[RMDB]
The record gives the reactivity of an RNA of 177 nucleotides to DMS.
Source: RMDB library OK2TRN, as collected in RNAgym.
RNA sequence: GGGAACGACUCGAGUAGAGUCGAAAAUGUGAUAGUUUGGUGAAGACCUUAGAUGGGUUUUUAGUGUCUAAGCGGGUUUGUGCAGUGGAACAUUUGUUCGUCGACGAAUGUUACAUGGCUCACUCUGGAUUUAGGCCGAAUUCGUUCGGCCUAAAUCAAAAGAAACAACAACAACAAC
Reactivity to DMS in 0.01 (KOAc 150mM, MgCl2 10mM, bicine 150mM(pH8.5), 24C), signal-to-noise 1, nucleotides 027 to 126: u010g000u000g030a100u000a070g020u000u010u010g010g020u000g000a050a060g010a020c020c020u000u000a110g000a160u020g010g010g010u000u000u000u000u000a080g010u010g000u000c020u000a050a080g010c090g010g020g020u000u020u000g040u000g000c030a080g040u010g000g000a000a020c030a040u010u000u000g000u010u010c190g020u000c220g000a040c010g010a000a000u000g000u000u000a020c000a010u000g000g000c010u000c040a070c070u000c030u000g000

The DMS profile rests on 1,786 reads. The reactions ran in a buffer of 150 mM KOAc, 10 mM MgCl2 and 150 mM bicine (pH 8.5), at 24 C.